[RMDB]
RNA sequence: GGGAACGACUCGAGUAGAGUCGAAAACUCUUCACCGUUGCCGAGCCACGGAAACGCGCAGCUGCAGUCCGACUCGAACCCCUUGCUGCACCUACUCUACCGGACAAGCAACAGCACCGACUCGCCGGGCAAUGUCUUGCUUCGGCAAGGCAUUGCCAAAAGAAACAACAACAACAAC
Reactivity to DMS in 0.01 (KOAc 150mM, MgCl2 10mM, bicine 150mM(pH8.5), 24C), signal-to-noise 1, nucleotides 027 to 126: c090u000c060u040u000c040a060c100c090g020u000u030g000c150c070g000a110g000c000c090a080c000g040g000a050a010a160c170g000c050g000c030a050g000c010u100g000c060a010g030u010c000c010g000a030c050u020c000g050a210a070c030c000c000c060u020u000g000c060u030g030c040a070c050c060u000a050c080u000c020u000a100c080c030g070g010a140c200a070a130g000c050a030a060c170a030g000c060a040c050c000g000a050c030u000c020g050c000c000g000
Reactivity to 2A3 in 0.01 (KOAc 150mM, MgCl2 10mM, bicine 150mM(pH8.5), 24C), signal-to-noise 4, nucleotides 027 to 126: c020u050c000u100u100c050a060c040c020g070u080u100g000c010c010g040a040g060c050c000a090c020g020g000a090a100a010c060g030c000g020c040a070g020c000u070g000c030a030g060u020c010c020g050a080c030u020c050g040a080a090c010c000c000c010u030u130g030c010u030g000c020a050c040c000u060a070c010u040c000u040a050c000c000g050g000a040c030a070a030g020c000a010a100c020a040g030c000a010c000c010g060a040c020u010c030g060c030c000g000